[RMDB]
RNA sequence: GGGAACGACUCGAGUAGAGUCGAAAACGAAGGAAAGCUUGACCAGCUAAACUUCUGCAACGCCAUUACGAGGACUGCCCUUAGAGGCUCAUGGCGAUAGGUCACCCCGCCGGUCGGUCAGCUGCUUAUACCCGUGCACGGUUCGCCGUGCACGGAAGUCGAUAUUCUGAUUCGUCAGAAUAUCGACAAAAGAAACAACAACAACAAC
Reactivity to DMS in 0.01 (KOAc 150mM, MgCl2 10mM, bicine 150mM(pH8.5), 24C), signal-to-noise 1, nucleotides 027 to 156: c060g040a100a020g030g000a110a300a120g000c000u000u000g020a040c090c060a300g010c020u000a030a060a300c010u010u000c010u000g020c030a120a130c050g000c030c030a040u000u000a090c060g000a120g030g050a110c110u000g040c000c010c020u020u000a110g010a140g010g010c020u000c050a060u000g010g010c000g000a100u000a070g020g010u000c030a130c020c000c020c080g030c010c050g020g030u000c060g000g020u000c030a200g020c030u000g010c000u000u020a170u010a130c160c050c000g090u000g000c000a060c000g040g050u000u000c270g080c000c020g000u000g010c020a010c000g020g000a010a060
Reactivity to 2A3 in 0.01 (KOAc 150mM, MgCl2 10mM, bicine 150mM(pH8.5), 24C), signal-to-noise 3, nucleotides 027 to 156: c050g000a010a000g030g030a290a080a010g000c010u020u020g000a020c000c010a010g050c010u070a240a170a000c010u020u020c020u070g040c040a090a080c030g010c010c000a020u050u100a070c060g030a050g060g070a080c080u100g010c000c000c030u050u100a120g070a130g080g000c010u020c050a010u020g000g000c010g020a060u090a080g030g000u030c030a070c030c010c010c020g020c030c020g100g020u070c020g000g000u030c030a030g020c040u060g000c030u150u100a080u100a180c010c010c010g010u000g000c000a000c000g010g040u040u030c070g060c080c000g030u000g000c000a000c000g000g000a000a000
The record gives the reactivity of an RNA of 207 nucleotides to DMS and 2A3. For 2A3, 2,225 sequencing reads were counted. 2A3 adducts were read by reverse transcription with SuperScript II with manganese. DMS adducts were read by reverse transcription with MarathonRT. The DMS profile rests on 2,097 reads.